[RMDB]
RNA sequence: GGGAACGACUCGAGUAGAGUCGAAAAGAUAUGGAGUAUCUGUGCCAUCGAGCUCGGAAACGAGAACUACUCGUUGGCACAGAGUACUCCUAAGUCAAACAGGUGUUAUGUUCGCAUAACACCUGAACAGUGUUAUCCAGUUCGCUGGAUAACACUGAAAAGAAACAACAACAACAAC
Reactivity to 2A3 in 0.01 (KOAc 150mM, MgCl2 10mM, bicine 150mM(pH8.5), 24C), signal-to-noise 2, nucleotides 027 to 126: g040a020u100a050u170g000g010a010g010u010a000u020c000u000g000u010g000c000c000a000u000c000g060a000g000c000u000c000g000g040a060a110a090c020g020a020g030a080a050c090u210a060c000u130c000g010u000u010g000g000c000a000c000a000g000a000g000u010a000c000u010c000c000u000a020a000g030u010c030a070a060a060c010a020g000g000u000g010u010u000a010u000g070u060u090c300g000c140a000u010a010a000c000a010c010c000u000g000a000a010
Reactivity to DMS in 0.01 (KOAc 150mM, MgCl2 10mM, bicine 150mM(pH8.5), 24C), signal-to-noise 2, nucleotides 027 to 126: g000a040u000a300u000g000g000a000g020u000a060u000c000u000g030u000g010c000c000a010u000c000g010a000g000c000u000c000g000g010a120a100a180c010g000a030g000a090a020c070u000a300c000u000c000g020u000u000g000g000c000a000c000a000g010a020g000u010a030c000u000c000c000u000a000a060g000u000c030a120a120a220c010a000g000g000u010g010u000u000a020u000g000u000u020c220g020c000a010u010a010a000c000a000c000c000u000g000a000a090